[RMDB]
RNA sequence: GGGAACGACUCGAGUAGAGUCGAAAAAGGGAAGAAAAUAAUUUAGAAAGGAGAUUCCGCCCCAGCUUGCGGUGCGGCCGAAAGGCUGUGAGGCAUCCCGGAGAGGGGAGGCAAGGCGAAAGCCAAAAACGGUACACCAUCUUCGGAUGGUGUACAACACAGUAGAUUUGUUCGCAAAUCUACUGUGAAAAGAAACAACAACAACAAC
Reactivity to DMS in 0.01 (KOAc 150mM, MgCl2 10mM, bicine 150mM(pH8.5), 24C), signal-to-noise 1, nucleotides 027 to 156: a130g000g000g050a020a070g010a070a090a080a180u000a130a100u000u000u010a130g000a030a080a090g020g040a170g000a180u000u010c000c050g000c030c040c000c000a160g000c040u010u000g030c060g020g020u010g020c100g010g060c010c000g000a150a110a150g020g030c060u000g010u000g000a100g020g010c010a030u000c000c050c000g010g000a050g000a030g010g040g000g010a040g000g020c110a060a040g010g010c060g000a080a060a130g050c010c000a020a010a100a130a120c070g020g020u000a010c000a010c000c000a020u000c010u000u010c300g050g010a030u000g000g000u000g020u000a000c000a000a040
Structure probing data (DMS) for a 207-nucleotide construct. DMS (dimethyl sulfate) methylates the pairing face of unpaired adenines and cytosines. The RNA was probed in 150 mM KOAc, 10 mM MgCl2 and 150 mM bicine (pH 8.5) at 24 C. DMS adducts were read by reverse transcription with MarathonRT.